[RMDB]
RNA sequence: GGGAACGACUCGAGUAGAGUCGAAAAUUUGCCAGGAUUCGGUACUUUUCCAGCCUUUCACUUCCCGGUAACGCUUGGGACGCGAAACUAUCCUGCCGGCAGCGACGGAACACGCUUCGAGAGGCCGCCAUCCCGGACCAUUCGUGGUCCGGGAUGGAAAAGAAACAACAACAACAAC
Reactivity to 2A3 in 0.01 (KOAc 150mM, MgCl2 10mM, bicine 150mM(pH8.5), 24C), signal-to-noise 1, nucleotides 027 to 126: u020u020u040g080c000c000a020g030g110a030u060u160c030g020g080u090a180c040u020u040u090u070c000c010a000g010c010c000u040u100u030c020a010c060u010u000c040c000c000g030g060u120a030a000c010g020c050u040u130g070g000g000a050c000g000c000g020a030a000a000c040u030a020u120c000c000u020g010c000c010g010g000c000a020g040c010g010a010c010g090g010a060a000c090a000c070g060c040u040u070c030g020a040g040a080g020g070c000c010g000